[RMDB]
RNA sequence: GGGAACGACUCGAGUAGAGUCGAAAACAUAAGACCUCAGAGCUAAUGAGCCACAUACCUAACCAAGGUGAAAGCUCCUUCUCUCGCAAUGUGUAACUCAUGAUUCUCAUGACCCCUGGUUGGAGAGCGCGCUAACACGCCUUCGGGCGUGUUAGAAGAAAUAUAUGGACUUCGGUCCAUAUAUUUCAAAAGAAACAACAACAACAAC
Reactivity to DMS in 0.01 (KOAc 150mM, MgCl2 10mM, bicine 150mM(pH8.5), 24C), signal-to-noise 2, nucleotides 027 to 156: c070a200u000a070a120g000a070c050c020u000c030a100g010a050g020c100u010a150a130u000g000a100g040c040c010a040c080a090u000a060c040c020u020a080a160c130c090a070a090g020g000u010g010a110a080a120g010c060u000c000c050u000u010c020u000c010u000c020g000c030a110a080u020g030u000g000u010a060a060c040u010c000a060u000g000a110u010u000c080u000c020a090u010g000a130c060c000c010c040u000g010g000u010u010g000g000a050g030a080g000c050g020c050g020c000u000a010a000c010a000c000g020c010c000u010u020c300g050g030g030c000g040u010g000u000u000a010g000a070a180
Reactivity to 2A3 in 0.01 (KOAc 150mM, MgCl2 10mM, bicine 150mM(pH8.5), 24C), signal-to-noise 2, nucleotides 027 to 156: c010a040u120a090a070g060a070c000c050u050c090a040g010a010g080c040u090a060a020u030g010a000g060c030c000a080c010a060u180a030c010c020u030a090a120c030c060a140a080g040g020u020g040a060a060a010g010c010u040c000c020u120u080c040u000c020u020c050g000c070a060a080u070g040u010g020u100a080a050c020u010c030a010u040g050a140u300u050c050u010c050a050u090g040a070c000c020c000c050u060g030g000u030u050g040g010a060g000a020g060c090g010c010g000c050u000a000a000c010a000c000g000c030c000u060u060c200g030g020g000c000g010u000g010u000u000a000g000a000a000